[RMDB]
RNA sequence: GGGAACGACUCGAGUAGAGUCGAAAACGCAUGCGCAUAUGCGGCGCGCUCGGCGGUGAGAGCUGCGGCAUCCGUCUGGAGUGCUUGCCCAAUUGUAUCGAGACGGGUACGAAUUGAGGUUAGUGUACCCUCGUCAUGAUUUCGAUCAUGACGAGGGAAAAGAAACAACAACAACAAC
Reactivity to 2A3 in 0.01 (KOAc 150mM, MgCl2 10mM, bicine 150mM(pH8.5), 24C), signal-to-noise 1, nucleotides 027 to 126: c030g020c020a020u140g030c070g000c100a010u090a030u300g020c050g070g000c020g000c000g000c020u020c020g060g000c040g040g030u060g050a250g010a020g000c020u070g000c010g120g000c000a010u000c010c000g020u010c030u070g100g000a030g010u020g030c000u000u080g000c000c000c000a000a010u060u010g060u000a030u020c030g010a050g060a110c040g050g010g040u020a010c020g140a030a020u010u030g060a130g030g060u120u130a000g020u110g060u150a090
Reactivity to DMS in 0.01 (KOAc 150mM, MgCl2 10mM, bicine 150mM(pH8.5), 24C), signal-to-noise 2, nucleotides 027 to 126: c060g060c040a030u000g010c140g010c130a090u000a110u010g010c040g040g000c070g000c010g000c000u000c050g020g000c010g030g020u000g000a100g000a110g000c010u010g030c060g030g000c020a120u010c020c000g020u000c020u010g040g010a060g000u020g000c000u000u010g030c020c000c000a090a100u010u000g020u010a030u000c010g000a190g040a080c300g000g000g000u000a040c020g000a020a060u000u000g000a090g030g000u000u000a030g010u010g000u000a150